The record gives the reactivity of an RNA of 207 nucleotides to 2A3 and DMS. Reactivities are given for positions 27 through 156. The reactions ran in a buffer of 150 mM KOAc, 10 mM MgCl2 and 150 mM bicine (pH 8.5), at 24 C.
RNA sequence: GGGAACGACUCGAGUAGAGUCGAAAAGGUGAAAGCGAAUCGGGGAAGAUAAGCUAGCAGCAAAAAGGAACCGAUUCCCACCAAGUUCGGAAAGAGAUACCGGGCGAGGCGCUGAAGAAAGUAUCUCAAACUCCCGCAAGUUUCGACUUGCGGGAAAACUAUCUGAUUUGUUCGCAAAUCAGAUAGUAAAAGAAACAACAACAACAAC
Reactivity to 2A3 in 0.01 (KOAc 150mM, MgCl2 10mM, bicine 150mM(pH8.5), 24C), signal-to-noise 4, nucleotides 027 to 156: g030g000u030g080a210a030a000g040c050g020a010a010u010c000g010g000g010g020a030a060g040a170u140a120a020g000c030u070a050g070c080a020g010c010a060a060a040a040a060g150g020a030a010c000c000g010a010u020u000c000c000c000a000c000c000a040a050g010u020u020c010g000g040a130a110a050g030a030g000a020u010a030c030c010g020g000g000c010g020a040g030g040c080g010c080u080g010a050a020g030a060a100a010g020u040a050u020c000u000c010a060a080a100c060u010c000c010c000g000c010a000a000g000u030u120u210c100g090a040c030u010u000g000c000g000g010g000a000a000a010
Reactivity to DMS in 0.01 (KOAc 150mM, MgCl2 10mM, bicine 150mM(pH8.5), 24C), signal-to-noise 1, nucleotides 027 to 156: g050g010u000g000a060a200a150g010c020g040a040a050u000c050g020g020g000g000a210a080g030a140u010a040a140g010c030u000a160g030c050a130g030c050a030a120a080a190a060g020g050a230a230c000c000g010a120u000u000c000c000c010a090c010c010a050a290g000u000u010c040g000g000a040a090a080g010a090g040a070u010a050c000c030g030g000g050c040g000a170g000g050c000g040c000u020g010a070a150g010a100a140a060g030u000a040u000c000u000c020a090a050a080c100u000c010c000c000g000c000a010a030g000u000u030u000c290g030a060c020u000u000g020c000g020g000g000a000a000a020